[RMDB]
The record gives the reactivity of an RNA of 177 nucleotides to DMS and 2A3.
RNA sequence: GGGAACGACUCGAGUAGAGUCGAAAAGAUAUGGAUCCUAUGGAAGAGCAACAGCUAGCUCGGAAACGAGCUAGACAUGCUCACAUAGGGAUCCUAAGUCAAACUGCUGGUCUUCGGACCAGCAGAAUCAUCUUAGUGCCUUCGGGCACUAAGAUGAAAAAGAAACAACAACAACAAC
Reactivity to DMS in 0.01 (KOAc 150mM, MgCl2 10mM, bicine 150mM(pH8.5), 24C), signal-to-noise 1, nucleotides 027 to 126: g000a090u000a300u020g010g000a010u000c000c000u000a000u000g000g020a300a180g040a030g030c000a060a100c300a230g030c010u000a010g000c000u000c000g020g030a040a090a190c020g050a010g000c000u000a020g000a010c130a160u010g010c000u010c000a050c000a000u000a020g050g000g000a010u000c000c010u000a010a120g000u000c090a130a090a250c020u000g000c000u000g000g000u030c010u000u050c230g000g000a010c000c000a000g030c020a000g010a010a080
Reactivity to 2A3 in 0.01 (KOAc 150mM, MgCl2 10mM, bicine 150mM(pH8.5), 24C), signal-to-noise 1, nucleotides 027 to 126: g060a040u060a040u160g000g010a010u000c010c010u020a000u000g150g230a300a300g030a140g020c020a010a210c040a120g140c010u000a010g000c000u000c010g000g000a030a030a010c000g010a010g000c010u000a010g090a020c010a000u060g020c010u070c000a010c010a010u000a080g140g030g040a000u040c000c000u010a120a000g040u060c070a150a040a150c010u030g000c000u020g010g000u040c010u110u110c300g080g000a000c070c000a080g000c000a000g000a000a000

The DMS profile rests on 911 reads. Conditions: 150 mM KOAc, 10 mM MgCl2 and 150 mM bicine (pH 8.5), 24 C. For 2A3 the reverse transcriptase was SuperScript II with manganese. For DMS the reverse transcriptase was MarathonRT.